[RMDB]
RNA sequence: GGGAACGACUCGAGUAGAGUCGAAAAUUCUCUUUCGAGAGAACAUCUGCGUACUACAUCUUUUGACGAAUUCCCACGGGAGUGGAGUCCCAAAUAGGACUCCACGAAGAACGUGCAUUCGAUAAGAUGUAUCGCUUCUUAAGUACUUCGGUACUAAGUUCCCAUUGUGUUUCGACACAAUGGGAACAAAAGAAACAACAACAACAAC
Reactivity to 2A3 in 0.01 (KOAc 150mM, MgCl2 10mM, bicine 150mM(pH8.5), 24C), signal-to-noise 2, nucleotides 027 to 156: u080u020c030u000c000u010u060u120c220g110a010g000a000g000a030a020c000a160u120c060u240g000c010g030u050a160c020u000a010c030a000u000c030u000u030u070u030g300a130c020g020a030a030u040u070c000c000c000a000c000g050g000g000a020g000u000g000g000a020g000u020c000c050c060a220a300a050u280a050g030g000a000c000u000c000c000a000c010g000a020a000g000a000a000c000g000u000g000c020a010u000u000c000g020a030u000a050a020g000a000u000g000u060a060u300c000g030c000u160u060c010u050u150a110a050g000u030a000c010u100u060c240g090g010u000a020c110u060a070a060
An RNA of 207 nucleotides, treated with 2A3 and read out base by base.
Conditions: 150 mM KOAc, 10 mM MgCl2 and 150 mM bicine (pH 8.5), 24 C.
For 2A3 the reverse transcriptase was SuperScript II with manganese.
For 2A3, 915 sequencing reads were counted.